This 177-nucleotide RNA was probed chemically with 2A3 and DMS. The RNA was probed in 150 mM KOAc, 10 mM MgCl2 and 150 mM bicine (pH 8.5) at 24 C. For DMS, 5,168 sequencing reads were counted. The 2A3 profile rests on 8,028 reads.
RNA sequence: GGGAACGACUCGAGUAGAGUCGAAAAGAUAUGGACCGAGGGGAGCUGAUAUCGGAAACGAUAUACAGCAUCGAUCCCGGUCCUAAGUCAAAACCAGCUCGUACUACUUCGGUAGUACGAGCUGGAACAUUCCAAAAGAGUUCGCUCUUUUGGAAUGAAAAGAAACAACAACAACAAC
Reactivity to 2A3 in 0.01 (KOAc 150mM, MgCl2 10mM, bicine 150mM(pH8.5), 24C), signal-to-noise 3, nucleotides 027 to 126: g010a000u070a030u100g000g000a000c020c020g040a300g000g010g000g000a040g000c000u000g010a010u000a010u000c000g010g000a080a060a010c030g000a000u000a000u080a240c000a000g000c000a010u290c000g010a030u020c000c000c010g000g010u000c000c000u000a060a010g020u010c030a020a000a090a170c010c010a000g000c000u000c000g030u010a000c000u000a010c000u040u070c220g130g000u000a000g000u000a000c010g020a010g030c020u000g000g000a000a000
Reactivity to DMS in 0.01 (KOAc 150mM, MgCl2 10mM, bicine 150mM(pH8.5), 24C), signal-to-noise 3, nucleotides 027 to 126: g000a030u000a300u000g000g000a000c010c000g000a090g020g010g000g010a120g030c000u000g010a040u010a000u000c000g010g000a080a050a150c010g000a020u000a010u000a120c000a000g010c000a140u010c110g000a060u000c000c000c010g000g000u000c010c000u000a010a060g010u000c020a080a080a150a190c010c000a000g010c000u000c000g010u000a000c000u000a000c010u000u020c200g020g000u000a000g000u000a000c000g000a000g000c000u000g000g000a010a080